An RNA of 177 nucleotides, treated with 2A3 and DMS and read out base by base. The data come from the RNA Mapping Database (RMDB), library M2PK50. DMS adducts were read by reverse transcription with MarathonRT. 2A3 adducts were read by reverse transcription with SuperScript II with manganese.
RNA sequence: GGGAACGACUCGAGUAGAGUCGAAAAUGGUGCCCGUUCGCGGGCACCACCUCGUGGUUAGGGCCACGUUAAAUAGUUGCUUAAGGCCUAAGCGUUGAUAAAGAUGCGCGAAAUUCGUUUCGCGCAACUCCUAUAAGACGUUCGCGUCUUAUAGGAGAAAAGAAACAACAACAACAAC
Reactivity to 2A3 in 0.01 (KOAc 150mM, MgCl2 10mM, bicine 150mM(pH8.5), 24C), signal-to-noise 2, nucleotides 027 to 126: u060g000g000u000g010c060c060c030g020u040u010c180g000c040g130g010g070c000a000c010c000a000c000c000u020c000g000u000g030g030u070u210a140g030g130g000c010c010a000c000g000u010u000a010a010a010u190a030g140u070u210g000c020u080u030a170a020g080g010c030c020u000a030a020g010c060g120u150u290g100a090u180a180a040a020g140a110u090g010c010g030c000g000a010a010a020u030u080c210g060u030u000u000c000g000c010g000c010a000a010
Reactivity to DMS in 0.01 (KOAc 150mM, MgCl2 10mM, bicine 150mM(pH8.5), 24C), signal-to-noise 3, nucleotides 027 to 126: u010g000g020u000g020c000c000c010g030u000u010c190g010c020g030g000g010c010a010c000c000a020c010c000u000c010g020u000g000g000u000u010a110g010g000g000c000c010a010c010g000u000u020a010a020a020u010a070g000u010u010g010c020u000u010a050a090g010g020c150c020u000a040a060g000c040g010u010u000g000a100u010a070a100a130g010a130u000g010c000g030c000g000a000a000a040u000u000c200g000u000u000u000c000g000c010g020c000a010a020